An RNA of 177 nucleotides, treated with DMS and 2A3 and read out base by base.
Reactivities are given for positions 27 through 126.
The RNA was probed in 150 mM KOAc, 10 mM MgCl2 and 150 mM bicine (pH 8.5) at 24 C.
It was measured as part of the RMDB library OK1LIB.
RNA sequence: GGGAACGACUCGAGUAGAGUCGAAAAGAAAGUAGCGAAUGCGGGACGGCUUCACGGUCCUGCUACGUGAAGCGAAGGGCUACUCCAUGUACGUAGUCCGAGUACGUGGUAAAGCUACGAAAAGAAAGGGUAUAGGUUUCUUCGGAAACCUAUACCCAAAAGAAACAACAACAACAAC
Reactivity to DMS in 0.01 (KOAc 150mM, MgCl2 10mM, bicine 150mM(pH8.5), 24C), signal-to-noise 2, nucleotides 027 to 126: g010a100a080a060g000u000a000g030c060g030a160a050u050g000c040g000g020g000a020c090g010g000c030u030u010c040a010c010g000g010u000c010c040u050g030c060u000a030c040g000u000g010a010a040g020c000g010a140a130g010g000g000c000u000a020c010u040c100c150a060u110g000u050a150c100g000u000a030g000u000c000c000g000a100g030u010a040c000g010u030g000g040u010a080a150a280g020c000u010a000c000g040a080a100a140a100g040a110a070a050
Reactivity to 2A3 in 0.01 (KOAc 150mM, MgCl2 10mM, bicine 150mM(pH8.5), 24C), signal-to-noise 2, nucleotides 027 to 126: g120a000a100a000g000u030a000g000c000g010a170a050u100g040c040g010g040g000a080c100g040g070c030u080u150c030a000c050g010g010u100c000c000u060g010c000u010a000c000g000u010g020a010a000g000c070g020a040a000g020g150g000c000u000a000c000u020c100c080a160u290g100u230a040c060g000u000a010g010u080c010c000g000a040g000u000a040c010g000u070g000g020u120a060a060a060g010c010u010a030c020g030a000a110a000a000g100a010a140a030